An RNA of 177 nucleotides, treated with DMS and 2A3 and read out base by base. It was measured as part of the RMDB library RFM100. The RNA was probed in 150 mM KOAc, 10 mM MgCl2 and 150 mM bicine (pH 8.5) at 24 C.
RNA sequence: GGGAACGACUCGAGUAGAGUCGAAAAUUGCGCGAACUGCAGCGAUCGCGUAUACUUUUGGCGUUGACGUAAUACAGUGUGCUUGCGGCUACCACCUGUAACCAUGCUGAUAAAAACCUCGCUCCGGAUUAGUGAUGCCUUUCGAGGCAUCACUAAUAAAAGAAACAACAACAACAAC
Reactivity to DMS in 0.01 (KOAc 150mM, MgCl2 10mM, bicine 150mM(pH8.5), 24C), signal-to-noise 2, nucleotides 027 to 126: u010u000g020c000g020c020g000a020a040c060u000g020c040a030g010c060g040a040u020c000g000c010g000u000a060u030a110c120u000u000u020u010g020g020c040g000u000u010g020a120c170g010u010a050a090u020a120c100a040g000u000g040u000g000c080u000u030g010c020g020g010c040u020a060c150c060a060c160c000u020g000u030a060a040c090c020a100u000g030c030u020g000a130u000a100a050a060a070a020c030c000u000c020g050c020u000c080c010g050g000
Reactivity to 2A3 in 0.01 (KOAc 150mM, MgCl2 10mM, bicine 150mM(pH8.5), 24C), signal-to-noise 2, nucleotides 027 to 126: u040u050g000c010g000c000g000a040a010c030u190g020c020a020g040c060g060a050u000c000g000c020g000u000a020u020a070c110u000u060u010u120g040g010c030g020u040u060g030a080c040g020u050a020a090u070a090c010a030g010u030g000u020g130c040u060u060g020c000g040g000c030u100a080c030c030a010c020c000u040g010u050a010a010c000c000a020u070g000c000u030g020a100u150a060a020a000a000a000c000c000u020c000g010c000u010c000c030g040g040